[RMDB]
RNA sequence: GGGAACGACUCGAGUAGAGUCGAAAAGCAGUGCACAGUUGCACGAAGAAUCAACAUCUGGACUAUCUAUACUGCGGAAGAAGAUAGUCAAGCCGGGCAAUAGAGUAUUCUUCUCUGUGGGAGGUACUACCUCCCCAUUAUUCGUAAUGGGGAGGUAAAAAGAAACAACAACAACAAC
Reactivity to DMS in 0.01 (KOAc 150mM, MgCl2 10mM, bicine 150mM(pH8.5), 24C), signal-to-noise 9, nucleotides 027 to 126: g020c080a110g010u000g020c040a080c150a120g010u010u000g020c050a050c060g000a080a110g000a070a060u010c100a070a090c100a090u000c050u000g010g010a020c010u000a010u000c000u000a130u010a140c040u000g000c190g010g000a150a060g000a090a040g000a010u000a010g000u000c010a080a060g010c120c040g000g000g010c100a070a070u010a070g010a080g010u000a040u000u010c040u000u000c010u000c080u000g010u000g010g000g000a060g000g010u000a050c120
Reactivity to 2A3 in 0.01 (KOAc 150mM, MgCl2 10mM, bicine 150mM(pH8.5), 24C), signal-to-noise 7, nucleotides 027 to 126: g030c040a010g010u010g040c010a050c030a120g120u280u140g040c020a010c050g010a040a010g050a020a080u110c050a020a080c010a080u050c040u080g040g000a000c000u010a000u000c000u010a120u060a220c030u070g060c100g080g000a020a020g020a010a000g000a020u020a010g000u010c000a000a010g010c010c010g040g030g010c020a040a100u090a120g060a010g040u040a050u130u080c020u050u010c020u000c030u040g030u120g030g020g010a030g000g020u020a030c020

Structure probing data (DMS and 2A3) for a 177-nucleotide construct. For 2A3 the reverse transcriptase was SuperScript II with manganese. The 2A3 profile rests on 13,524 reads. The RNA was probed in 150 mM KOAc, 10 mM MgCl2 and 150 mM bicine (pH 8.5) at 24 C. For DMS the reverse transcriptase was MarathonRT.